The data come from the RNA Mapping Database (RMDB), library OK3TST.
Chemical mapping of a 207-nucleotide RNA with 2A3.
The RNA was probed in 150 mM KOAc, 10 mM MgCl2 and 150 mM bicine (pH 8.5) at 24 C.
Reactivities are given for positions 27 through 156.
2A3 adducts were read by reverse transcription with SuperScript II with manganese.

RNA sequence: GGGAACGACUCGAGUAGAGUCGAAAAUUGGGAGACAUCGUUUGUGAUGGAAAAGACUGUUCUCUCAGAAUGUCGAAAUAUCUUGGGCCGAAUAACGACUUUUUUGGACAACCUGUGACCCCAAAGGACCUCGGAUACACCAAAGUGUCCAUCGAGGGAACGCUAUUGUGUUCGCACAAUAGCGUUCAAAAGAAACAACAACAACAAC
Reactivity to 2A3 in 0.01 (KOAc 150mM, MgCl2 10mM, bicine 150mM(pH8.5), 24C), signal-to-noise 1, nucleotides 027 to 156: u040u010g000g030g000a040g000a010c020a050u060c130g070u060u070u100g150u130g060a110u060g090g140a010a030a080a010g080a000c040u040g070u110u040c000u020c000u000c010a030g070a100a080u090g050u050c010g030a030a030a110u150a060u030c010u060u060g030g000g050c030c090g080a040a030u070a070a000c010g000a080c000u100u040u010u030u130u050g050g000a010c040a090a040c010c000u020g100u110g150a160c010c000c020c030a000a050a030g020g010a030c020c030u050c060g040g010a030u090a100c030a040c040c150a020a160a020g070u050g000u000c030c020a010u090c020g030a030g000g000